[RMDB]
RNA sequence: GGGAACGACUCGAGUAGAGUCGAAAAGAUAUGGACGUGUCCAGGGAGCUGCGACUCGGAAACGAGUCGGCAGCGAGGAUCUGGUCACGUCCUAAGUCAAAGCGCAUAGUGUUCGCACUAUGCGCAACCAAAAAGUAAGGUUCGCCUUACUUUUUGGAAAAGAAACAACAACAACAAC
Reactivity to DMS in 0.01 (KOAc 150mM, MgCl2 10mM, bicine 150mM(pH8.5), 24C), signal-to-noise 5, nucleotides 027 to 126: g010a020u000a300u010g000g010a020c010g040u000g010u000c000c000a010g010g010g010a120g030c010u000g010c000g000a020c000u010c000g010g000a080a070a150c000g000a010g010u000c000g020g040c000a010g010c000g000a090g010g020a110u010c000u000g000g000u000c000a000c000g010u000c000c000u000a000a070g000u000c040a110a140a180g000c000g020c000a000u000a000g010u000g020u010u010c280g020c000a010c000u000a000u000g010c000g020c000a010a030
Reactivity to 2A3 in 0.01 (KOAc 150mM, MgCl2 10mM, bicine 150mM(pH8.5), 24C), signal-to-noise 4, nucleotides 027 to 126: g020a010u040a020u100g000g000a000c000g000u010g010u000c010c000a000g040g060g040a300g030c010u010g000c000g000a000c010u000c010g000g010a040a040a010c000g000a000g000u030c050g140g120c010a000g000c020g000a060g050g040a220u020c000u000g000g000u010c000a010c000g000u010c000c000u010a010a000g000u000c030a050a130a080g010c000g000c010a000u010a010g020u020g070u120u120c300g070c110a000c000u000a000u000g000c000g000c010a000a000

Structure probing data (DMS and 2A3) for a 177-nucleotide construct.
Conditions: 150 mM KOAc, 10 mM MgCl2 and 150 mM bicine (pH 8.5), 24 C.
For DMS the reverse transcriptase was MarathonRT.